[RMDB]
RNA sequence: GGGAACGACUCGAGUAGAGUCGAAAAGAAUAUAUGAGGGAAUGGGACCAGAAUGGUCCUCGGGGUCUCAGUAGAGUAAAAGGAGAAAUUUGAGGUGUUCGUGGACUAUUAGGGUGGCGGUCUGCACCGCGCUACUGAAUUUCGAUUCAGUAGCGCGAAAAGAAACAACAACAACAAC
Reactivity to DMS in 0.01 (KOAc 150mM, MgCl2 10mM, bicine 150mM(pH8.5), 24C), signal-to-noise 2, nucleotides 027 to 126: g000a110a120u010a100u020a060u000g000a150g020g000g030a170a130u000g010g000g000a070c010c020a210g000a110a070u010g020g000u000c000c000u000c060g030g000g000g000u000c000u000c000a050g000u000a080g010a140g030u020a050a040a090a100g010g020a150g000a060a070a170u000u000u000g000a040g000g010u010g000u000u000c020g010u000g000g010a010c010u000a090u010u000a090g020g000g030u020g000g000c120g000g000u000c090u000g020c120a090c150
Reactivity to 2A3 in 0.01 (KOAc 150mM, MgCl2 10mM, bicine 150mM(pH8.5), 24C), signal-to-noise 1, nucleotides 027 to 126: g030a090a000u140a000u050a040u240g050a050g000g000g040a130a190u130g030g000g040a040c000c010a000g150a200a080u070g000g000u040c000c000u000c010g000g010g010g020u000c000u010c040a020g090u080a050g000a080g100u200a140a150a090a010g200g050a150g120a010a120a120u120u040u090g020a030g000g000u040g110u140u040c030g020u040g000g000a010c020u070a040u050u050a030g040g030g000u050g000g030c040g000g010u000c050u090g030c000a010c040
An RNA of 177 nucleotides, treated with DMS and 2A3 and read out base by base. Conditions: 150 mM KOAc, 10 mM MgCl2 and 150 mM bicine (pH 8.5), 24 C. Source: RMDB library OK2TRN, as collected in RNAgym. The DMS profile rests on 1,049 reads. DMS adducts were read by reverse transcription with MarathonRT.